Structure probing data (2A3 and DMS) for a 177-nucleotide construct. The 2A3 profile rests on 1,446 reads. Conditions: 150 mM KOAc, 10 mM MgCl2 and 150 mM bicine (pH 8.5), 24 C. Values cover nucleotides 27 to 126. The data come from the RNA Mapping Database (RMDB), library VIROID.
[RMDB]
RNA sequence: GGGAACGACUCGAGUAGAGUCGAAAAUCGGACCGCGAGGAGGUGGAGAUGCCAUGCCGACCCGAAGAGGAAAGAAGGAUACGGACGCAAACCUGUGAGUGGAAGUUCACUCUUUAUUGGGGGGUACGAACUUAGUUACGUUCGCGUAACUAAGUUCAAAAGAAACAACAACAACAAC
Reactivity to 2A3 in 0.01 (KOAc 150mM, MgCl2 10mM, bicine 150mM(pH8.5), 24C), signal-to-noise 1, nucleotides 027 to 126: u170c030g010g030a010c040c000g000c020g010a000g000g040a020g000g030u060g020g040a060g010a040u090g000c030c010a070u120g010c030c000g100a070c000c010c020g020a070a000g050a000g070g070a060a090a000g090a020a010g000g010a010u040a130c100g000g010a000c010g000c000a020a100a130c010c060u050g030u090g050a020g010u010g000g010a090a160g030u120u120c000a040c040u060c000u060u120u040a200u130u220g000g000g000g010g010g050u010a030c080
Reactivity to DMS in 0.01 (KOAc 150mM, MgCl2 10mM, bicine 150mM(pH8.5), 24C), signal-to-noise 2, nucleotides 027 to 126: u000c090g010g000a110c060c060g020c080g000a080g010g000a040g010g020u000g000g010a060g010a100u000g000c090c080a050u010g010c020c050g000a120c040c040c060g010a090a070g010a100g000g000a080a040a060g000a080a060g000g010a070u000a090c090g000g020a080c070g000c090a030a040a100c030c030u000g000u000g020a030g040u010g000g010a070a120g010u010u010c030a020c020u000c020u000u000u000a120u030u020g000g010g020g000g020g000u020a090c170